[RMDB]
The record gives the reactivity of an RNA of 207 nucleotides to 2A3 and DMS. Values cover nucleotides 27 to 156. The RNA was probed in 150 mM KOAc, 10 mM MgCl2 and 150 mM bicine (pH 8.5) at 24 C.
RNA sequence: GGGAACGACUCGAGUAGAGUCGAAAAUACCGUCUUCUCCCCGACGGUUUCAAUCCAUAGCUUCACGUUGUGUAGCGUAGGUGUAAGGUAUCGUGUGGUGUAUAAACACCACAUAGUCUCUUAGGGGUCAAGCUGAUAAACUUCGGUUUAUCAGCAAGGAGUCAUAAAGGUUCGCCUUUAUGACUCCAAAAGAAACAACAACAACAAC
Reactivity to 2A3 in 0.01 (KOAc 150mM, MgCl2 10mM, bicine 150mM(pH8.5), 24C), signal-to-noise 6, nucleotides 027 to 156: u100a000c000c000g010u000c010u200u060c030u060c020c000c000c010g000a000c000g020g000u020u030u060c050a030a040u050c020c010a070u050a140g010c000u030u050c010a020c050g300u240u220g000u070g030u110a010g000c040g070u100a040g010g020u030g030u040a040a040g060g030u080a040u170c060g010u010g000u000g010g010u020g070u020a090u110a300a270a050c000a000c000c000a000c000a000u000a000g010u000c010u000c010u090u120a030g000g010g020g020u040c050a090a020g010c000u010g000a000u000a010a010a000c000u010u030c090g020g000u000u000u000a000u000c000a000g000c000a000a010
Reactivity to DMS in 0.01 (KOAc 150mM, MgCl2 10mM, bicine 150mM(pH8.5), 24C), signal-to-noise 2, nucleotides 027 to 156: u000a040c010c000g000u000c020u000u000c020u000c010c000c020c070g010a030c030g020g010u000u010u030c070a120a120u000c000c020a190u000a190g020c030u000u000c050a040c060g020u010u000g070u000g010u000a070g000c010g020u010a120g030g040u000g010u000a070a090g010g040u000a040u000c040g040u000g040u000g020g070u000g030u000a140u010a150a140a110c000a000c000c010a000c000a000u000a030g020u010c030u010c030u010u000a080g040g010g030g030u000c030a060a240g010c010u000g020a030u000a000a010a010c000u000u010c300g050g000u000u000u000a010u000c000a030g030c000a010a030
Overview: For 2A3 the reverse transcriptase was SuperScript II with manganese. It was measured as part of the RMDB library M2RFPK. High DMS reactivity at an A or C suggests that its Watson-Crick edge is free.